[RMDB]
RNA sequence: GGGAACGACUCGAGUAGAGUCGAAAAAGAACUGCAAACGAUAAUAAUCUCUAUGUAGGUGCACCAGCUUUAGCUGCGGCUUAAUCCUACGAGGAUUGAAGGUGUGACGGGCAACAGACCCGGAAAACCCAUGACGUAUGUUCGCAUACGUCAUGGGAAAAGAAACAACAACAACAAC
Reactivity to 2A3 in 0.01 (KOAc 150mM, MgCl2 10mM, bicine 150mM(pH8.5), 24C), signal-to-noise 3, nucleotides 027 to 126: a000g110a020a000c030u040g000c080a070a120a000c090g050a010u110a200a060u100a010a070u110c110u000c020u140a130u210g010u000a010g000g060u060g000c000a180c090c000a010g000c040u150u150u140a010g000c000u060g090c070g070g000c000u040u110a010a020u100c000c000u000a050c040g040a030g010g010a010u030u020g020a030a000g020g020u020g000u000g100a040c010g040g000g010c020a090a050c020a220g090a110c000c000c000g030g020a020a020a000a000
Reactivity to DMS in 0.01 (KOAc 150mM, MgCl2 10mM, bicine 150mM(pH8.5), 24C), signal-to-noise 3, nucleotides 027 to 126: a010g000a140a100c110u020g050c040a050a110a100c100g010a090u040a070a070u050a040a020u000c010u050c020u020a090u000g000u010a000g000g020u000g010c100a150c080c000a010g010c000u000u040u000a100g020c000u010g030c300g000g000c070u000u040a080a060u040c020c010u000a000c000g030a080g020g010a020u000u000g040a120a080g000g000u010g000u000g000a190c010g020g010g000c060a200a090c160a130g000a120c000c000c000g000g000a040a020a040a120
Source: RMDB library OK1LIB, as collected in RNAgym. Chemical mapping of a 177-nucleotide RNA with 2A3 and DMS. The reactions ran in a buffer of 150 mM KOAc, 10 mM MgCl2 and 150 mM bicine (pH 8.5), at 24 C. Values cover nucleotides 27 to 126.